[RMDB]
An RNA of 177 nucleotides, treated with 2A3 and DMS and read out base by base. The DMS profile rests on 2,503 reads. Reactivities are rounded to 0.1 and cut off at 0 and 3. For 2A3, 1,792 sequencing reads were counted. For 2A3 the reverse transcriptase was SuperScript II with manganese.

RNA sequence: GGGAACGACUCGAGUAGAGUCGAAAAUACAAGUACGAAAGUACAAGCCUUAUGAGUUGGGCCUUCUGGUCAAAUUAGCGCUCACCCAGGAGGUCCUUCGCAUGAGGUCGACAAGCGCUAAAAGAAACAUACUACCCUGGUUCGCCAGGGUAGUAUGAAAAGAAACAACAACAACAAC
Reactivity to 2A3 in 0.01 (KOAc 150mM, MgCl2 10mM, bicine 150mM(pH8.5), 24C), signal-to-noise 1, nucleotides 027 to 126: u170a020c020a100a000g000u000a020c010g050a120a020a010g040u000a020c000a020a050g000c010c000u000u010a000u020g000a020g060u040u020g020g000g000c020c000u000u000c030u000g020g000u010c030a040a070a300u100u080a190g100c070g020c060u030c020a020c010c000c000a000g000g010a000g000g000u020c000c000u000u010c000g000c010a010u000g000a000g030g000u030c000g010a050c060a050a090g050c020g070c180u160a030a060a000a140g100a000a120a000
Reactivity to DMS in 0.01 (KOAc 150mM, MgCl2 10mM, bicine 150mM(pH8.5), 24C), signal-to-noise 3, nucleotides 027 to 126: u010a110c180a070a120g010u000a000c000g000a220a080a190g000u000a000c000a190a250g010c010c000u000u000a000u000g010a040g000u000u000g020g000g020c010c000u000u000c030u000g000g010u000c090a060a070a090u010u020a090g000c050g020c050u000c070a100c300c000c000a010g000g000a000g000g000u000c000c010u000u000c010g010c010a010u000g000a020g000g010u000c040g020a070c170a060a080g020c070g000c070u020a030a040a060a050g010a110a120a140